Chemical mapping of a 177-nucleotide RNA with DMS. Source: RMDB library TTRINS, as collected in RNAgym. For DMS the reverse transcriptase was MarathonRT. The RNA was probed in 150 mM KOAc, 10 mM MgCl2 and 150 mM bicine (pH 8.5) at 24 C.
RNA sequence: GGGAACGACUCGAGUAGAGUCGAAAAGAUAUGGAUUCAGAUACAACAUAUCUCGUGGGAGAGGCGUGAUCGGAAACGAUCACCGCCUCAUCGAUCACGAGAGUAUGUUGUAUCUGAAUCCUAAGUCGAUACUAACACGGUUCGCCGUGUUAGUAUCAAAAGAAACAACAACAACAAC
Reactivity to DMS in 0.01 (KOAc 150mM, MgCl2 10mM, bicine 150mM(pH8.5), 24C), signal-to-noise 3, nucleotides 027 to 126: g010a090u010a300u000g010g010a010u010u000c000a010g000a020u000a000c000a010a000c000a010u000a030u000c000u000c000g050u010g000g000g010a010g020a010g010g030c030g010u000g000a010u000c010g000g010a180a110a190c000g000a020u000c010a010c130c160g040c000c000u000c000a040u000c240g000a110u010c000a000c000g020a020g000a040g010u000a000u000g010u010u010g000u000a000u000c000u010g010a000a000u000c000c010u000a010a060g010u010c140